[RMDB]
RNA sequence: GGGAACGACUCGAGUAGAGUCGAAAAGGAUUAUCAAGUCUCUUGUGAAAUCUAAUGGCUUAACCAUUAAACUGCUUGGGAAACUGAUAGUCUAGAGUGAGGGAGAGGCAGAUGGAAUUGGUGGUGUCGACUACUCGCGUUUCGACGCGAGUAGUCGAAAAGAAACAACAACAACAAC
Reactivity to 2A3 in 0.01 (KOAc 150mM, MgCl2 10mM, bicine 150mM(pH8.5), 24C), signal-to-noise 1, nucleotides 027 to 126: g020g000a000u010u010a000u000c000a020a000g040u000c000u000c000u060u030g020u060g080a020a020a070u070c050u050a000a000u010g000g050c060u090u150a110a300c000c000a000u010u000a040a000a030c080u180g020c000u000u030g000g000g030a000a050a000c000u000g000a000u000a000g010u000c000u000a020g000a000g090u110g090a020g000g030g000a090g000a020g020g030c010a020g000a130u040g020g040a030a040u100u030g020g010u030g000g060u090g070u010
Source: RMDB library RFM100, as collected in RNAgym.
The record gives the reactivity of an RNA of 177 nucleotides to 2A3.
Reactivities are given for positions 27 through 126.
Conditions: 150 mM KOAc, 10 mM MgCl2 and 150 mM bicine (pH 8.5), 24 C.